[RMDB]
RNA sequence: GGGAACGACUCGAGUAGAGUCGAAAACAUGAGGGCUAUGGUGGUGCCCAGAGAGCAGUGUCCAGCGUGAGGGAGAUUGUGGUGCCUGGAGACCUGGCAGUAUCACCCGGCAUGAGGGAGAUGCUGGUGCACCGGCUGUGGAUGUGAGCUUGCCUGGGCGAUAGUACUUAUUCGUAAGUACUAUCGCAAAAGAAACAACAACAACAAC
Reactivity to 2A3 in 0.01 (KOAc 150mM, MgCl2 10mM, bicine 150mM(pH8.5), 24C), signal-to-noise 2, nucleotides 027 to 156: c030a050u170g050a100g010g000g000c020u060a020u130g020g010u010g030g010u050g020c020c030c010a010g020a000g000a010g000c080a050g020u060g020u080c050c020a030g010c080g110u090g040a060g000g070g000a040g010a060u050u120g030u050g090g040u030g030c010c020u030g020g020a050g020a030c000c020u010g060g000c010a000g010u040a000u050c010a060c020c000c000g050g050c100a090u190g050a120g020g060g000a080g000a020u010g000c000u010g000g030u080g000c010a020c020c020g020g020c030u030g030u050g030g010a040u080g040u040g080a010g010c010u030u040g000c000c000u040g000g050
Reactivity to DMS in 0.01 (KOAc 150mM, MgCl2 10mM, bicine 150mM(pH8.5), 24C), signal-to-noise 1, nucleotides 027 to 156: c050a110u020g010a100g040g000g030c030u020a060u000g020g000u010g020g060u000g000c030c040c020a110g010a100g020a090g050c030a110g020u000g010u000c030c060a090g020c070g050u010g020a220g000g000g010a100g000a140u010u010g020u010g030g000u010g040c060c010u020g020g000a140g000a070c050c030u000g010g000c030a050g020u000a150u000c000a080c000c010c000g000g000c040a140u010g000a150g000g030g020a150g000a060u000g030c000u000g000g010u000g000c020a070c030c000g010g000c020u000g030u000g040g020a170u010g000u000g000a070g010c080u000u000g020c020c080u000g010g000